[RMDB]
RNA sequence: GGGAACGACUCGAGUAGAGUCGAAAAAUAUGAUCUCGACUGGAUCGCGCAGUACGUAGUACCACGGCGCGCGCCUAUAGUGCGCCUAGGCCCGUGGCGCAUGAUCAGGCCGGUACGAUCUGUGGCCUGACUGUCUGUCGUUCGCGACAGACAGUCAAAAAGAAACAACAACAACAAC
Reactivity to 2A3 in 0.01 (KOAc 150mM, MgCl2 10mM, bicine 150mM(pH8.5), 24C), signal-to-noise 1, nucleotides 027 to 126: a000u270a210u090g030a030u000c030u030c000g080a060c000u010g110g020a030u100c030g000c020g000c050a040g060u300a110c030g050u150a050g010u080a170c060c000a070c040g060g000c030g010c010g000c000g050c040c000u300a270u080a110g040u030g000c030g000c000c020u040a040g040g000c040c020c010g010u010g030g000c000g000c000a050u120g010a080u050c030a000g050g000c060c010g010g070u080a070c080g040a060u080c040u050g090u140g050g050c030c020
Reactivity to DMS in 0.01 (KOAc 150mM, MgCl2 10mM, bicine 150mM(pH8.5), 24C), signal-to-noise 1, nucleotides 027 to 126: a040u010a050u000g010a020u000c020u000c130g010a130c050u020g000g000a040u010c030g020c000g000c020a080g010u000a090c030g000u010a100g000u020a130c040c040a110c250g000g020c010g020c060g010c100g000c130c120u010a060u020a140g000u000g000c000g000c000c050u010a110g000g010c130c040c020g040u000g000g000c010g000c010a020u010g020a080u010c050a080g010g010c000c010g020g020u010a060c120g020a080u000c030u000g010u010g020g000c020c030

The record gives the reactivity of an RNA of 177 nucleotides to 2A3 and DMS. Reactivities are given for positions 27 through 126. The 2A3 profile rests on 886 reads. For DMS, 1,091 sequencing reads were counted. Conditions: 150 mM KOAc, 10 mM MgCl2 and 150 mM bicine (pH 8.5), 24 C.